[RMDB]
RNA sequence: GGGAACGACUCGAGUAGAGUCGAAAAAUGAGUGGCUUACCGGCCGGAAUGCAGUGGCGGCCAGUUCAGGAGGCUGCUGCCGAAAGAGAUGCAUCCUGAUACACUACCCAUCUUGAUGCACAAUCAGAGUUAGAUGGUAGUUCGCUACCAUCUAACUAAAAGAAACAACAACAACAAC
Reactivity to DMS in 0.01 (KOAc 150mM, MgCl2 10mM, bicine 150mM(pH8.5), 24C), signal-to-noise 5, nucleotides 027 to 126: a080u000g000a080g030u010g020g020c030u000u010a130c150c090g010g010c020c000g020g010a110a070u010g000c050a060g020u000g000g010c040g000g000c040c030a140g010u000u020c250a110g000g000a090g000g020c020u000g000c010u000g020c030c080g000a080a080a100g010a090g000a100u000g000c010a020u000c000c050u010g000a050u010a070c120a080c100u010a130c080c060c030a080u000c030u000u000g000a020u000g010c080a050c130a120a100u010c100a100g010
Reactivity to 2A3 in 0.01 (KOAc 150mM, MgCl2 10mM, bicine 150mM(pH8.5), 24C), signal-to-noise 4, nucleotides 027 to 126: a020u200g020a060g100u120g010g000c050u060u100a070c030c020g010g000c000c030g010g030a140a030u170g010c020a020g020u030g040g040c060g130g030c030c000a080g060u140u230c100a060g040g070a040g080g000c000u010g010c010u010g020c020c010g110a120a090a010g090a010g020a000u050g000c000a000u010c000c010u020g010a030u040a080c120a040c100u240a140c030c010c000a000u000c020u010u020g000a020u040g020c040a010c000a020a120u130c050a040g030